[RMDB]
RNA sequence: GGGAACGACUCGAGUAGAGUCGAAAAGGUUGUUAGCAAGGGCCGGGUAAGACCGGUGCCAGCCGCCGCGGUAAUACCGGCGGCUCGAGUGGUGGCCGAUAUUAUUGAGUCUAAAGGGUCCGUAGCCCCACAUGGGAUAGUUCGCUAUCCCAUGUGGAAAAGAAACAACAACAACAAC
Reactivity to DMS in 0.01 (KOAc 150mM, MgCl2 10mM, bicine 150mM(pH8.5), 24C), signal-to-noise 2, nucleotides 027 to 126: g000g030u010u020g000u030u050a070g000c070a200a080g010g000g000c000c000g010g020g000u000a030a070g000a100c010c000g030g000u000g000c010c050a140g020c030c000g000c000c000g000c180g000g030u000a090a140u050a300c030c000g000g000c050g020g000c000u010c040g040a090g010u000g000g010u000g000g020c020c000g020a050u000a070u050u040a090u010u000g020a200g020u000c050u010a060a120a190g000g000g010u000c000c020g010u030a180g000c000c210
Reactivity to 2A3 in 0.01 (KOAc 150mM, MgCl2 10mM, bicine 150mM(pH8.5), 24C), signal-to-noise 2, nucleotides 027 to 126: g060g000u020u020g000u040u030a060g000c100a080a100g000g000g000c000c000g000g040g000u060a020a000g000a010c000c020g000g000u030g030c010c010a000g000c030c000g000c000c070g000c210g000g020u040a020a050u010a100c000c000g000g000c000g000g050c020u000c010g040a100g010u110g030g000u000g010g100c050c000g000a000u020a060u120u100a140u070u290g100a030g030u000c000u100a060a040a000g140g000g000u040c000c000g050u020a000g000c020c020
Structure probing data (DMS and 2A3) for a 177-nucleotide construct.
The data come from the RNA Mapping Database (RMDB), library RFM100.
Conditions: 150 mM KOAc, 10 mM MgCl2 and 150 mM bicine (pH 8.5), 24 C.
2A3 adducts were read by reverse transcription with SuperScript II with manganese.
For DMS the reverse transcriptase was MarathonRT.